[RMDB]
RNA sequence: GGGAACGACUCGAGUAGAGUCGAAAAUCAGGUGUCUUCGGACACCUGAAAAGAAAGCGCAAAACACCGAAAUAAAACGGUGAGGGCCGCAACCCACCAUAAAAACUUCUGGGUUCGCCCAGAAGAAGAUAAUAAGGAUCUUCGGAUCCUUAUUAUCAAAAGAAACAACAACAACAAC
Reactivity to DMS in 0.01 (KOAc 150mM, MgCl2 10mM, bicine 150mM(pH8.5), 24C), signal-to-noise 3, nucleotides 027 to 126: u000c000a000g010g020u000g000u000c010u000u010c120g040g010a000c000a010c010c000u010g020a000a010a070a140g020a090a080a190g010c020g000c020a070a050a210a090c000a030c010c000g010a070a100a150u000a060a090a120a050c040g010g020u000g010a100g010g010g010c180c010g010c010a120a100c000c000c000a070c170c080a090u010a060a040a110a130a080c010u000u000c000u000g000g000g010u000u020c180g000c000c000c000a020g010a010a000g000a100a040
Reactivity to 2A3 in 0.01 (KOAc 150mM, MgCl2 10mM, bicine 150mM(pH8.5), 24C), signal-to-noise 3, nucleotides 027 to 126: u020c000a000g020g000u020g010u000c010u040u090c270g080g000a010c000a000c000c000u010g000a000a000a000a000g010a020a050a000g020c020g000c040a040a080a040a050c000a010c000c010g060a040a170a130u250a060a130a040a010c000g000g000u010g010a060g040g070g020c180c000g000c020a020a070c030c000c010a010c020c020a090u200a160a150a000a040a070c010u020u000c000u010g030g000g020u030u050c180g050c020c000c000a000g000a000a000g000a000a010